[RMDB]
RNA sequence: GGGAACGACUCGAGUAGAGUCGAAAAGAUAUGGAAUACAAAGGACUUGCGUCAAGUGGACAUGAUGGAGAUCGGAAACGAUCUUUCAUCAACAGCCACUGACGCAAGUCCUUUGUAUUCCUAAGUCCCUUAGUGUAGAGUUCGCUCUACACUAAGGAAAAGAAACAACAACAACAAC
Reactivity to DMS in 0.01 (KOAc 150mM, MgCl2 10mM, bicine 150mM(pH8.5), 24C), signal-to-noise 2, nucleotides 027 to 126: g000a100u000a300u010g010g010a010a010u000a000c000a000a000a010g000g000a040c000u010u000g010c010g000u000c000a140a040g010u010g000g010a050c110a270u010g000a000u000g030g010a020g030a020u000c000g010g000a160a120a240c000g010a010u000c000u010u000u010c000a010u000c000a020a050c300a220g000c020c010a000c000u000g000a010c000g000c010a000a000g030u000c000c000u010u000u000g000u000a000u000u000c000c000u000a020a100g010u000c050